The record gives the reactivity of an RNA of 177 nucleotides to DMS and 2A3.
Source: RMDB library RFMREP, as collected in RNAgym.
DMS adducts were read by reverse transcription with MarathonRT.
The RNA was probed in 150 mM KOAc, 10 mM MgCl2 and 150 mM bicine (pH 8.5) at 24 C.

[RMDB]
RNA sequence: GGGAACGACUCGAGUAGAGUCGAAAACGAGAGGAGUGCGCCCCCCUGUCCAACUCCGAACCUACAGACGCCAUUUGACGCAGGGAGUCCGGUGCACGGGGUAAGCCUGUGUACCAUAAGGGAGACAGUUGCAUUAAUACUUCGGUAUUAAUGCAACAAAAGAAACAACAACAACAAC
Reactivity to DMS in 0.01 (KOAc 150mM, MgCl2 10mM, bicine 150mM(pH8.5), 24C), signal-to-noise 2, nucleotides 027 to 126: c070g010a080g010a180g000g000a070g020u010g000c120g030c040c000c020c010c000c020u000g010u010c060c050a090a100c050u010c010c010g020a100a140c070c020u010a090c180a060g000a070c050g030c020c010a090u000u000u000g010a050c080g040c040a110g000g000g000a080g000u000c050c080g020g020u010g010c030a000c010g000g010g010g000u030a110a120g000c000c000u000g010u000g010u010a000c010c000a050u010a090a100g000g000g020a130g000a070c140a100
Reactivity to 2A3 in 0.01 (KOAc 150mM, MgCl2 10mM, bicine 150mM(pH8.5), 24C), signal-to-noise 1, nucleotides 027 to 126: c060g020a000g000a030g120g000a020g020u100g030c090g110c000c030c000c000c020c000u050g030u020c020c000a030a020c010u000c000c010g030a060a080c000c000u040a040c040a080g040a070c060g030c020c000a000u140u120u040g010a010c070g000c020a000g060g010g000a030g050u100c050c050g000g000u020g000c040a000c000g050g000g000g020u210a100a080g300c000c000u000g000u010g010u000a010c000c010a000u020a030a030g080g000g000a060g020a020c030a040